About this RNA: An RNA of 177 nucleotides, treated with DMS and 2A3 and read out base by base. Conditions: 150 mM KOAc, 10 mM MgCl2 and 150 mM bicine (pH 8.5), 24 C. For 2A3, 1,266 sequencing reads were counted. The data come from the RNA Mapping Database (RMDB), library OK2TST.
RNA sequence: GGGAACGACUCGAGUAGAGUCGAAAAUUAUUGAGAGAAGACAAGAAAAUUCCGGGCGAAUGGGCAGUUCGGUGAUUUUGGGCCGUCAGCGGGUUGCUCGCCCCGGUGCGGAAGGGAGCAAAAUCCGUGAGCUGAUUAUAUUCGUAUAAUCAGCUCAAAAAGAAACAACAACAACAAC
Reactivity to DMS in 0.01 (KOAc 150mM, MgCl2 10mM, bicine 150mM(pH8.5), 24C), signal-to-noise 3, nucleotides 027 to 126: u020u020a080u010u000g000a110g010a090g010a070a060g000a080c050a090a090g000a060a060a070a160u010u020c020c000g020g000g000c070g020a090a070u010g010g010g010c010a030g010u000u000c010g000g020u000g000a020u000u000u000u000g000g000g010c070c090g020u000c020a030g000c020g000g000g000u000u000g010c010u000c010g010c080c010c000c000g000g000u000g020c070g000g020a080a070g000g000g010a100g010c080a080a060a100a080u010c020c040g010
Reactivity to 2A3 in 0.01 (KOAc 150mM, MgCl2 10mM, bicine 150mM(pH8.5), 24C), signal-to-noise 1, nucleotides 027 to 126: u070u060a050u120u190g010a080g020a010g010a070a000g040a020c020a010a030g080a090a080a030a040u150u000c000c000g030g020g030c070g070a190a080u120g010g010g000c000a000g000u000u010c030g060g140u030g000a000u050u080u110u110g000g020g000c020c000g020u030c010a040g130c040g010g020g000u010u010g020c010u010c020g010c000c020c010c000g010g040u030g000c010g020g030a070a030g050g000g040a090g000c000a020a030a210a030u240c050c030g050